[RMDB]
RNA sequence: GGGAACGACUCGAGUAGAGUCGAAAAGUGUUCUUAUAGAUGUCUCUGGUCGUCUUGGCCACUGGCUCGGAGACAGCCACCGAGACCCGGCAUUUGGAGCAGCUGGCUGGGAUGCUGCAGGGAGGGGAUGUAUGGAGAGGUUCGCCUCUCCAUACAUAAAAGAAACAACAACAACAAC
Reactivity to DMS in 0.01 (KOAc 150mM, MgCl2 10mM, bicine 150mM(pH8.5), 24C), signal-to-noise 4, nucleotides 027 to 126: g010u010g010u000u000c020u000u000a160u010a110g010a100u000g000u000c010u000c020u000g010g010u000c020g020u000c050u000u010g000g000c060c030a050c080u010g000g010c000u010c040g030g010a100g010a090c150a090g010c040c020a110c110c060g010a100g010a140c130c100c050g000g020c060a090u010u000u000g030g000a110g010c020a030g010c160u010g000g000c020u000g000g000g010a040u000g000c070u000g000c030a070g010g000g000a050g010g000g000g000
Reactivity to 2A3 in 0.01 (KOAc 150mM, MgCl2 10mM, bicine 150mM(pH8.5), 24C), signal-to-noise 2, nucleotides 027 to 126: g060u030g020u120u020c030u070u170a180u120a300g160a150u110g090u000c010u000c020u060g140g000u050c020g020u000c020u040u070g000g000c010c020a040c030u060g070g070c030u030c060g010g000a050g030a040c050a010g020c000c000a030c020c080g090a050g050a100c000c030c050g040g000c030a040u060u100u130g140g000a030g010c000a000g010c100u030g030g000c010u010g020g000g000a020u060g030c010u060g130c030a020g010g020g030a040g000g000g000g020
The record gives the reactivity of an RNA of 177 nucleotides to DMS and 2A3.
Values cover nucleotides 27 to 126.
2A3 adducts were read by reverse transcription with SuperScript II with manganese.